[RMDB]
RNA sequence: GGGAACGACUCGAGUAGAGUCGAAAAAAGGAAGUGGAUGGGUGUAAGAAGUCAUCACAGUGUGUCGCGUUCCUCCGUGACAAUACUAAGUGGGUCUACCAAUCACAGUACCUUAGGAGGGCAGACGCCCUAGAGCCAAUUUCGAUUGGCUCUAGGGAAAAGAAACAACAACAACAAC
Reactivity to 2A3 in 0.01 (KOAc 150mM, MgCl2 10mM, bicine 150mM(pH8.5), 24C), signal-to-noise 4, nucleotides 027 to 126: a000a010g080g000a060a020g030u050g060g030a050u060g010g060g080u040g020u030a050a060g080a090a020g120u070c030a070u060c000a080c030a050g010u060g000u010g010u050c010g000c030g040u150u130c030c030u060c020c010g020u020g020a020c000a060a060u100a050c030u070a080a140g020u040g010g030g000u010c020u020a090c010c040a010a010u070c020a040c020a100g050u120a100c000c000u020u020a030g000g050a030g010g030g010c030a030g010a070c050g050
Reactivity to DMS in 0.01 (KOAc 150mM, MgCl2 10mM, bicine 150mM(pH8.5), 24C), signal-to-noise 6, nucleotides 027 to 126: a020a050g010g010a150a120g020u010g000g010a060u000g010g010g000u010g000u020a080a090g000a080a070g000u010c030a060u000c060a080c130a050g010u000g000u000g000u000c010g010c020g000u010u000c080c050u010c300c010g010u000g010a020c040a050a050u000a030c010u010a050a130g010u000g000g000g000u000c050u000a080c050c030a040a040u010c070a060c080a040g000u000a090c040c040u000u000a120g000g000a090g000g000g010c080a080g010a100c220g010

Structure probing data (2A3 and DMS) for a 177-nucleotide construct.
It was measured as part of the RMDB library OK2TRN.
The RNA was probed in 150 mM KOAc, 10 mM MgCl2 and 150 mM bicine (pH 8.5) at 24 C.
2A3 is a SHAPE reagent: it acylates the 2'-hydroxyl of flexible nucleotides of all four kinds.
For 2A3, 5,162 sequencing reads were counted.
For DMS the reverse transcriptase was MarathonRT.
2A3 adducts were read by reverse transcription with SuperScript II with manganese.